[RMDB]
This 177-nucleotide RNA was probed chemically with 2A3 and DMS.
The reactions ran in a buffer of 150 mM KOAc, 10 mM MgCl2 and 150 mM bicine (pH 8.5), at 24 C.
Values cover nucleotides 27 to 126.
The data come from the RNA Mapping Database (RMDB), library OK1LIB.
For 2A3, 5,066 sequencing reads were counted.

RNA sequence: GGGAACGACUCGAGUAGAGUCGAAAAGCACCGCGUGUUUGUAGAGCGGACGAAAGCUCUGGCUUCGGGCCGCCAGUCAAGGGUAGCAGACGAUCGAGUCAGGGUCGACUCGACUGGUCGGCCAUACGCCGGUUUCUAGCUUCGGCUGGGAACCGGCAAAAGAAACAACAACAACAAC
Reactivity to 2A3 in 0.01 (KOAc 150mM, MgCl2 10mM, bicine 150mM(pH8.5), 24C), signal-to-noise 5, nucleotides 027 to 126: g040c010a040c090c020g030c040g020u100g060u030u160u120g100u100a070g020a020g030c020g000g030a020c060g100a070a070a010g000c040u050c050u100g090g000c020u040u030c030g010g010g010c000c000g000c000c010a020g010u020c040a070a140g030g040g010u110a050g070c040a030g040a070c040g020a050u120c050g050a060g090u080c070a080g070g000g050u050c010g010a010c000u020c050g010a000c020u010g000g010u080c040g010g000c010c000a020u060a000c050
Reactivity to DMS in 0.01 (KOAc 150mM, MgCl2 10mM, bicine 150mM(pH8.5), 24C), signal-to-noise 4, nucleotides 027 to 126: g000c100a170c000c020g020c180g010u010g010u010u000u020g020u010a050g000a050g020c010g010g000a120c120g000a060a080a130g000c020u000c040u020g000g010c050u020u010c060g020g000g020c000c030g000c010c010a020g000u010c040a080a090g000g000g020u030a170g000c080a080g010a100c010g000a110u030c130g000a120g010u020c060a120g000g010g000u020c030g010a050c000u000c040g000a010c020u010g000g000u000c010g030g000c000c000a050u040a040c170